[RMDB]
RNA sequence: GGGAACGACUCGAGUAGAGUCGAAAAUUGCUCAGGAAGUCAUCGCAGGUGCUUACGGCACGGGCGACGCUCGACGUGUUGCUCUCGGUGGUCAGUACGACGCUGUCCAGGCACGAGUCAAUGAGAUCCUGACCGGCGUCUCCAAUGCGAAGCCUCACAGACGAAUACAAUUCGUUGUAUUCGUCUGAAAAGAAACAACAACAACAAC
Reactivity to 2A3 in 0.01 (KOAc 150mM, MgCl2 10mM, bicine 150mM(pH8.5), 24C), signal-to-noise 3, nucleotides 027 to 156: u090u080g000c010u030c050a020g060g040a050a030g060u060c020a040u040c080g020c100a020g010g100u040g010c020u110u140a050c100g080g000c110a030c010g020g010g000c050g050a040c040g030c000u100c060g150a110c090g030u080g040u050u030g010c030u010c000u020c090g000g080u020g040g000u060c020a020g030u050a080c140g030a030c070g000c000u000g000u060c050c020a010g030g000c030a030c140g070a030g030u080c050a050a080u200g030a050g020a130u050c020c030u040g010a030c020c050g020g000c000g020u020c010u000c030c040a050a070u110g020c010g020a060a000g020c030c010u030c000a060
Reactivity to DMS in 0.01 (KOAc 150mM, MgCl2 10mM, bicine 150mM(pH8.5), 24C), signal-to-noise 2, nucleotides 027 to 156: u000u010g010c030u010c000a130g020g010a120a120g010u000c030a040u000c020g030c050a080g030g020u000g020c020u010u010a090c140g040g020c040a050c020g000g040g030c020g020a050c050g040c040u010c060g020a100c110g010u000g020u000u020g020c040u000c000u010c020g000g020u000g020g000u000c020a160g050u010a140c030g000a080c010g040c030u020g020u000c000c040a080g050g000c100a130c050g020a110g030u010c050a030a090u000g010a230g000a160u000c020c000u000g010a080c030c010g030g020c010g000u000c000u000c050c080a060a120u000g000c000g020a080a260g000c020c020u000c020a300